[RMDB]
RNA sequence: GGGAACGACUCGAGUAGAGUCGAAAAUUGCCAUAUUUUGAUCUUGGAUGAACCUACCCGCGGUGUUGAUGUGGGAGCCAAGGCUGAAAUUUAUAACAUCAUUCACCAAUUGGCCGAACGCGGUUAAUACUUUUAGCAUGUUCGCAUGCUAAAAGUAAAAAGAAACAACAACAACAAC
Reactivity to DMS in 0.01 (KOAc 150mM, MgCl2 10mM, bicine 150mM(pH8.5), 24C), signal-to-noise 3, nucleotides 027 to 126: u010u010g000c030c050a060u020a070u000u000u000u000g010a110u010c050u000u000g000g010a120u000g000a070a100c130c030u000a100c150c030c030g000c060g020g000u000g000u000u010g010a100u000g000u000g030g000g000a110g030c050c020a020a060g020g030c070u000g000a070a050a110u010u020u000a090u030a110a080c050a030u000c060a080u010u000c020a080c010c010a090a160u010u000g000g010c000c030g000a100a070c170g020c060g020g010u020u010a030a110
Reactivity to 2A3 in 0.01 (KOAc 150mM, MgCl2 10mM, bicine 150mM(pH8.5), 24C), signal-to-noise 2, nucleotides 027 to 126: u080u070g040c020c000a100u070a100u150u140u060u060g060a080u090c020u010u030g070g020a060u010g080a070a060c000c010u060a140c040c020c040g050c040g000g000u140g050u120u070g060a090u060g030u060g050g020g100a000g000c040c000a040a000g030g000c000u000g000a010a100a030u220u270u060a180u090a070a020c000a040u030c010a050u120u010c020a040c050c000a030a190u050u010g020g000c020c000g070a190a060c110g010c040g130g000u070u030a050a050